Conditions: 150 mM KOAc, 10 mM MgCl2 and 150 mM bicine (pH 8.5), 24 C.
The record gives the reactivity of an RNA of 177 nucleotides to 2A3 and DMS.

RNA sequence: GGGAACGACUCGAGUAGAGUCGAAAAUGACUAUCACAAAAAUCGAUCAAUGCAUUCGAAAGCGUGCAAUUUGCAGGUGUUUUUCCUUUCUCGCACUCAGCUCCUGUCAACGCAUCGAUCGGCAGGAGUGGUAAUUAAUGUUCGCAUUAAUUACCACAAAAGAAACAACAACAACAAC
Reactivity to 2A3 in 0.01 (KOAc 150mM, MgCl2 10mM, bicine 150mM(pH8.5), 24C), signal-to-noise 9, nucleotides 027 to 126: u090g020a020c050u070a060u190c050a020c060a100a130a040a040a050u080c040g040a010u040c030a040a080u060g020c020a030u030u080c020g080a100a020a030g030c020g010u010g000c020a060a130u040u050u180g040c060a060g000g060u020g050u050u040u010u040u050c020c000u040u070u030c050u020c030g050c010a040c050u100c050a020g010c010u000c000c000u010g010u030c020a030a050c070g030c060a090u090c060g080a060u030c040g020g000c010a010g000g030a020
Reactivity to DMS in 0.01 (KOAc 150mM, MgCl2 10mM, bicine 150mM(pH8.5), 24C), signal-to-noise 9, nucleotides 027 to 126: u010g010a100c060u000a060u000c060a130c100a050a060a050a090a060u000c040g010a040u000c040a080a090u000g000c010a060u000u000c040g000a100a070a130g010c070g010u000g010c030a060a080u000u000u000g010c090a070g010g010u000g000u000u000u000u000u000c020c020u000u000u000c020u000c040g010c150a080c170u000c130a130g000c030u000c000c000u010g000u000c020a060a080c110g000c090a030u000c060g010a050u000c090g010g010c040a010g000g000a040

The 2A3 profile rests on 23,584 reads.